Chemical mapping of a 177-nucleotide RNA with DMS and 2A3. For DMS the reverse transcriptase was MarathonRT. For 2A3, 10,821 sequencing reads were counted. The data come from the RNA Mapping Database (RMDB), library OK2TRN.
RNA sequence: GGGAACGACUCGAGUAGAGUCGAAAAGACACCUGAGUUCAACUAUCCUCCCACCUCAGCCUCCUGAAUAACUGGGACUACAGGUGCGCACCACCAUACCUGGCUAACUUUUGUAUUUUUGUAGAGGCUUGUAUAGUCUAUUCGUAGACUAUACAAGAAAAGAAACAACAACAACAAC
Reactivity to DMS in 0.01 (KOAc 150mM, MgCl2 10mM, bicine 150mM(pH8.5), 24C), signal-to-noise 9, nucleotides 027 to 126: g010a170c070a050c040c010u000g010a070g010u000u000c040a080a110c100u000a100u000c030c040u000c010c010c020a120c070c040u000c040a050g000c020c020u000c010c030u000g010a070a040u010a060a070c100u010g010g010g010a060c040u000a050c040a030g000g010u000g010c060g010c070a100c030c020a030c040c030a050u000a050c030c020u000g010g000c030u000a050a060c060u000u000u000u010g010u000a040u000u000u000u010u010g010u010a080g010a120g010g010
Reactivity to 2A3 in 0.01 (KOAc 150mM, MgCl2 10mM, bicine 150mM(pH8.5), 24C), signal-to-noise 5, nucleotides 027 to 126: g050a030c020a030c040c040u040g050a040g060u040u110c060a120a060c060u090a120u070c010c000u000c000c010c010a040c000c010u020c020a010g000c000c010u020c000c010u030g030a060a030u070a080a030c050u050g030g010g030a010c010u130a070c050a020g030g010u000g020c020g010c010a040c010c000a010c010c000a010u050a070c000c010u020g040g000c020u040a050a060c020u070u080u060u090g060u050a130u030u100u020u050u010g020u020a050g020a040g130g060